[RMDB]
RNA sequence: GGGAACGACUCGAGUAGAGUCGAAAAUAAUUGGACUCAACGCCGGACAUCUCACCAGCAUCGACAGCAGGAGUGACGAUCAGGUUGAUGACCUUAUCAGACCUGCUGAGAGGAGGUGCAUGGCCGCCUUACAGUAAUAGUUCGCUAUUACUGUAAGAAAAGAAACAACAACAACAAC
Reactivity to 2A3 in 0.01 (KOAc 150mM, MgCl2 10mM, bicine 150mM(pH8.5), 24C), signal-to-noise 9, nucleotides 027 to 126: u160a000a100u080u120g070g040a050c030u020c080a050a050c100g050c070c030g010g020a020c000a030u060c080u000c050a040c030c010a020g110c020a130u030c020g220a260c040a010g000c000a010g010g020a110g120u090g080a040c050g000a000u010c040a000g020g070u030u050g180a140u270g070a030c000c000u000u010a010u000c000a010g070a090c000c000u000g000c000u010g000a010g000a000g020g040a040g010g000u000g010c010a020u030g010g010c000c000g010c010
Reactivity to DMS in 0.01 (KOAc 150mM, MgCl2 10mM, bicine 150mM(pH8.5), 24C), signal-to-noise 9, nucleotides 027 to 126: u010a080a130u010u010g020g010a130c040u000c050a100a090c130g020c120c030g010g010a100c040a020u000c070u000c020a050c030c030a090g020c120a110u000c020g010a150c090a010g010c000a010g010g010a180g000u010g010a130c150g010a020u000c300a010g000g010u000u010g010a150u010g000a080c000c000u000u000a030u000c010a070g000a090c010c000u000g000c010u000g000a290g000a050g000g000a100g000g010u000g010c300a040u000g000g010c020c030g000c170
The data come from the RNA Mapping Database (RMDB), library RFMREP. The record gives the reactivity of an RNA of 177 nucleotides to 2A3 and DMS. The DMS profile rests on 19,936 reads. DMS adducts were read by reverse transcription with MarathonRT.